[RMDB]
RNA sequence: GGGAACGACUCGAGUAGAGUCGAAAAGAUGUGCCACUGGAAUAAACAUUUAAUAGAGUGUUUGGAAACAUGUAUCUAGUUCAAAAGAAGGAUCUGGGCUGAGGUAUAAAUUUAGGGCAGUUUACAUUGUGUAGGGAACAACUAAAUUCAUGGAAGAUAAAUACCUCCUAUUCGUAGGAGGUAUUUAAAAAGAAACAACAACAACAAC
Reactivity to 2A3 in 0.01 (KOAc 150mM, MgCl2 10mM, bicine 150mM(pH8.5), 24C), signal-to-noise 4, nucleotides 027 to 156: g030a060u050g020u030g020c000c020a040c100u040g020g080a090a060u110a070a090a030c050a050u110u160u170a300a180u200a130g110a020g040u030g030u000u050u070g030g030a070a040a010c020a040u060g020u050a050u040c060u040a060g020u080u060c030a050a080a030a060g070a040a030g060g020a060u040c040u060g030g030g000c020u020g030a010g000g060u050a030u090a120a140a050u100u170u140a020g010g010g010c010a020g000u040u090u040a050c030a030u090u020g020u040g010u030a020g010g010g030a040a040c010a040a010c050u170a090a050a090u140u080c030a020u040g040g010a030a030g040a060
Reactivity to DMS in 0.01 (KOAc 150mM, MgCl2 10mM, bicine 150mM(pH8.5), 24C), signal-to-noise 4, nucleotides 027 to 156: g000a100u000g030u000g010c010c030a150c050u020g010g010a140a160u010a100a060a060c010a060u000u000u010a070a180u000a140g010a090g020u000g000u000u000u000g010g010a150a110a070c030a050u000g010u000a060u010c030u010a060g020u000u000c040a050a060a100a110g000a110a110g020g000a070u000c040u000g020g020g020c050u000g000a020g010g010u000a020u000a040a050a070u000u010u000a070g020g020g030c030a070g030u000u000u000a070c050a080u000u000g010u000g020u010a080g010g010g010a060a040c050a040a140c050u000a040a020a090u000u000c030a070u010g010g000a060a110g000a170
The data come from the RNA Mapping Database (RMDB), library OK3TST. Structure probing data (2A3 and DMS) for a 207-nucleotide construct. The RNA was probed in 150 mM KOAc, 10 mM MgCl2 and 150 mM bicine (pH 8.5) at 24 C. 2A3 adducts were read by reverse transcription with SuperScript II with manganese.